This 177-nucleotide RNA was probed chemically with 2A3 and DMS. The RNA was probed in 150 mM KOAc, 10 mM MgCl2 and 150 mM bicine (pH 8.5) at 24 C. The data come from the RNA Mapping Database (RMDB), libraries RFM100 and RFMREP. DMS adducts were read by reverse transcription with MarathonRT. For 2A3 the reverse transcriptase was SuperScript II with manganese.
[RMDB]
RNA sequence: GGGAACGACUCGAGUAGAGUCGAAAAAUCUAAGCUCGAAACCCACCUGGAAACGAGGAACCACCGAGGCCACUCCUACAAGAGGAGAUCGAUAGACUCGGGGUGUACGCGCCAAGGCAACGAGGCGUUGGUAAUGGUUAUUCGUAACCAUUACCAAAAAAGAAACAACAACAACAAC
Reactivity to 2A3 in 0.01 (KOAc 150mM, MgCl2 10mM, bicine 150mM(pH8.5), 24C), signal-to-noise 9, nucleotides 027 to 126: a000u120c080u100a080a020g030c000u020c030g040a100a060a070c020c010c000a050c020c040u050g020g050a090a090a060c040g020a050g040g040a010a010c010c030a120c030c000g010a010g030g000c040c010a030c020u000c010c000u090a160c100a150a050g050a020g270g000a000g010a050u150c070g060a090u040a180g060a050c000u000c000g000g000g000g000u020g020u070a030c030g000c000g000c020c010a040a020g010g000c010a040a030c030g030a030g030g020c030g020
Reactivity to DMS in 0.01 (KOAc 150mM, MgCl2 10mM, bicine 150mM(pH8.5), 24C), signal-to-noise 9, nucleotides 027 to 126: a080u030c070u010a090a120g010c010u000c020g000a090a090a120c030c000c030a190c080c040u010g000g010a050a080a090c040g010a080g000g010a220a040c010c020a100c000c010g000a020g010g010c040c060a090c000u000c000c000u000a150c300a120a120g010a020g000g000a010g000a040u020c130g000a110u030a070g010a090c000u000c000g000g000g000g000u000g000u020a070c080g000c020g000c020c000a040a240g000g000c140a040a090c020g010a280g010g010c050g020